[RMDB]
RNA sequence: GGGAACGACUCGAGUAGAGUCGAAAACCGAAGCCCAAUUGAGGGAUAAUACAGGCUCUCCCAUCCAACUCCUAUUCCAACACGUCCUCGUCGUACAGAGUGGUAACAUGUGUCACCACAUAUCCAACAUAGUGUCGCAUCUUCGGAUGCGACACAAUCCAAGUGAUAUCUUCGGAUAUCACUUGGAAAAAGAAACAACAACAACAAC
Reactivity to 2A3 in 0.01 (KOAc 150mM, MgCl2 10mM, bicine 150mM(pH8.5), 24C), signal-to-noise 3, nucleotides 027 to 156: c000c000g040a060a010g060c000c010c020a030a070u110u130g030a100g000g000g030a040u090a060a050u120a060c140a070g040g000c000u010c000u010c010c010c020a080u090c040c030a020a030c040u040c000c010u040a040u050u040c010c000a010a030c010a030c060g040u040c000c020u060c000g080u030c020g020u090a060c040a040g150a060g060u020g000g010u060a130a010c020a080u160g120u060g020u100c020a010c030c000a010c000a010u090a050u060c040c020a010a020c000a080u180a110g020u010g000u020c000g000c000a000u000c000u000u020c090g130g000a000u020g000c000g010a000c000a010c000a000a000
Reactivity to DMS in 0.01 (KOAc 150mM, MgCl2 10mM, bicine 150mM(pH8.5), 24C), signal-to-noise 1, nucleotides 027 to 156: c000c000g030a090a140g020c010c030c020a080a180u000u010g020a110g020g000g030a080u000a140a060u010a120c080a100g070g010c020u000c040u000c000c030c020a110u000c050c030a090a120c080u000c010c020u020a090u000u010c020c010a100a090c120a080c040g000u000c000c000u000c040g040u000c030g000u030a130c050a100g010a180g000u000g010g020u000a020a040c030a190u020g010u010g050u000c030a080c010c000a000c050a150u010a050u010c020c000a030a070c030a100u000a140g000u000g000u000c000g010c010a000u000c010u000u000c300g040g000a030u000g010c000g000a000c000a010c000a030a030